[RMDB]
RNA sequence: GGGAACGACUCGAGUAGAGUCGAAAAAUGCCGCAUUCAGAGACGGUAACUCUAGUGGGCGACUGUCGAUCUAGCGUUGACAUCUACAUACUAUAUAGUAAUACCAAUACUCAAGACUACGAAACGGCCAUCGCACUACGUUCGCGUAGUGCGAUGGAAAAGAAACAACAACAACAAC
Reactivity to 2A3 in 0.01 (KOAc 150mM, MgCl2 10mM, bicine 150mM(pH8.5), 24C), signal-to-noise 3, nucleotides 027 to 126: a000u150g000c000c000g100c040a030u090u120c040a020g000a000g010a030c080g070g050u150a170a160c010u000c010u000a050g040u080g040g000g000c030g040a010c050u040g050u050c010g000a010u000c070u050a000g100c070g050u020u070g010a050c000a040u040c020u020a070c030a190u040a050c050u050a060u080a080u040a140g110u080a070a050u050a070c080c000a000a030u000a090c030u000c040a000a060g090a150c050u070a070c120g090a050a010a020c000g000g010
Reactivity to DMS in 0.01 (KOAc 150mM, MgCl2 10mM, bicine 150mM(pH8.5), 24C), signal-to-noise 1, nucleotides 027 to 126: a100u000g000c000c000g000c030a020u020u000c120a280g020a070g020a170c000g000g000u000a090a150c120u000c090u000a050g060u000g000g000g010c100g000a130c000u000g000u000c080g000a050u000c120u010a150g060c070g010u000u000g000a010c000a070u000c060u000a120c280a090u020a080c000u000a140u030a100u000a010g000u000a060a030u000a120c000c100a200a100u000a130c120u000c060a050a090g000a260c030u000a130c100g000a030a080a030c080g000g000
Annotation: An RNA of 177 nucleotides, treated with 2A3 and DMS and read out base by base. It was measured as part of the RMDB library OK1LIB. Reactivities are given for positions 27 through 126. The reactions ran in a buffer of 150 mM KOAc, 10 mM MgCl2 and 150 mM bicine (pH 8.5), at 24 C.